[RMDB]
RNA sequence: GGGAACGACUCGAGUAGAGUCGAAAAGUUCAUUCGCUGGGUGCAAGUAAAUGUAUUUGUCAGAGCUCCUGAAGCGCGCACGGGAGCUCUUGGAUUUAAUACCACUUUGUUGCACCUGUGCUGAAGCGCGCACGGCAACCGAAAGGUGCGAUAAUAACAGAGAUUAAACGUUCGCGUUUAAUCUCUGAAAAGAAACAACAACAACAAC
Reactivity to 2A3 in 0.01 (KOAc 150mM, MgCl2 10mM, bicine 150mM(pH8.5), 24C), signal-to-noise 1, nucleotides 027 to 156: g030u050u100c020a030u070u000c010g000c010u030g010g010g010u000g000c000a000a050g080u160a050a000a000u300g000u000a030u010u010u050g070u040c160a120g000a000g040c000u000c000c000u030g060a120a050g020c010g000c000g000c000a000c000g010g020g000a000g000c000u000c030u020u040g020g000a000u060u050u300a020a020u000a000c000c010a080c040u000u030u070g050u040u010g000c000a000c000c000u000g000u000g000c000u030g000a160a040g000c000g000c000g000c000a000c000g000g000c020a000a000c030c000g030a110a060a000g060g000u010g020c000g010a020u120a230a050u140a170a000

Source information:
Structure probing data (2A3) for a 207-nucleotide construct. The RNA was probed in 150 mM KOAc, 10 mM MgCl2 and 150 mM bicine (pH 8.5) at 24 C. Values cover nucleotides 27 to 156. Values are in units of 0.01, from 0 to 300, in steps of 10.